[RMDB]
RNA sequence: GGGAACGACUCGAGUAGAGUCGAAAAAGUCUGAUGUUUGACUGUUAACAUGAUGAAAAUAAUAAUUUCUUCUUCUUAAAGAACAUGUAUGCUCCGACUUGUAAAUGCGCCCACAAUGCUCACAUUUUAACAUAGGCAUAACUUCACUUAUAAAAAAACUGAUAGAUGCGUUCGCGCAUCUAUCAGUAAAAGAAACAACAACAACAAC
Reactivity to 2A3 in 0.01 (KOAc 150mM, MgCl2 10mM, bicine 150mM(pH8.5), 24C), signal-to-noise 2, nucleotides 027 to 156: a000g020u020c050u050g020a020u050g070u000u120u030g030a010c000u020g030u050u030a080a020c050a140u110g010a000u020g030a070a050a000a000u270a030a020u120a090a200u190u000u010c000u050u000c000u080u020c030u090u120a050a130a040g020a010a010c020a050u090g030u030a010u080g010c010u000c000c020g020a010c000u080u000g060u090a000a090a060u010g040c000g030c050c000c000a070c050a040a020u030g050c000u040c010a040c010a100u160u090u090u070a150a000c060a020u070a100g060g000c040a000u050a120a000c010u050u140c070a050c160u250u300a140u300a140a300a010a020a300a000
Structure probing data (2A3) for a 207-nucleotide construct.
Source: RMDB library OK3TST, as collected in RNAgym.
The reactions ran in a buffer of 150 mM KOAc, 10 mM MgCl2 and 150 mM bicine (pH 8.5), at 24 C.